This 177-nucleotide RNA was probed chemically with DMS and 2A3. 2A3 adducts were read by reverse transcription with SuperScript II with manganese. The reactions ran in a buffer of 150 mM KOAc, 10 mM MgCl2 and 150 mM bicine (pH 8.5), at 24 C. Values cover nucleotides 27 to 126. It was measured as part of the RMDB libraries RFM100 and RFMREP.
RNA sequence: GGGAACGACUCGAGUAGAGUCGAAAACGGGUCACGAACCGGAUUAGAUACCCGGGUAGUCCGAGCUGUAAACGAUGUCUGCUAGGUGUGGCACAGGCUACGAGCCUGUGCUGUGCCGUAGGGAAGCGUAUAUGCAACACUUCGGUGUUGCAUAUACAAAAGAAACAACAACAACAAC
Reactivity to DMS in 0.01 (KOAc 150mM, MgCl2 10mM, bicine 150mM(pH8.5), 24C), signal-to-noise 5, nucleotides 027 to 126: c030g010g010g010u010c050a070c040g000a170a300c010c010g000g010a070u000u000a130g000a190u030a050c130c000c020g000g020g010u010a160g000u010c060c070g010a060g010c030u010g010u000a040a080a230c060g000a050u010g010u000c010u000g000c020u000a100g010g020u000g000u010g000g000c000a000c000a000g000g000c000u010a110c300g020a190g000c000c010u000g020u000g000c000u000g000u000g000c000c010g010u030a040g010g000g000a080a090g010c160
Reactivity to 2A3 in 0.01 (KOAc 150mM, MgCl2 10mM, bicine 150mM(pH8.5), 24C), signal-to-noise 6, nucleotides 027 to 126: c010g010g020g070u110c110a010c060g020a080a030c050c000g020g000a010u030u060a070g090a120u130a100c010c000c000g010g010g000u070a030g020u030c030c030g030a060g050c060u080g050u220a070a080a070c050g060a090u110g080u090c010u060g090c020u060a030g000g010u010g000u000g030g000c000a000c000a000g010g000c010u090a090c250g060a030g010c000c000u000g000u000g000c000u000g000u000g010c010c000g010u020a010g020g010g050a040a020g040c020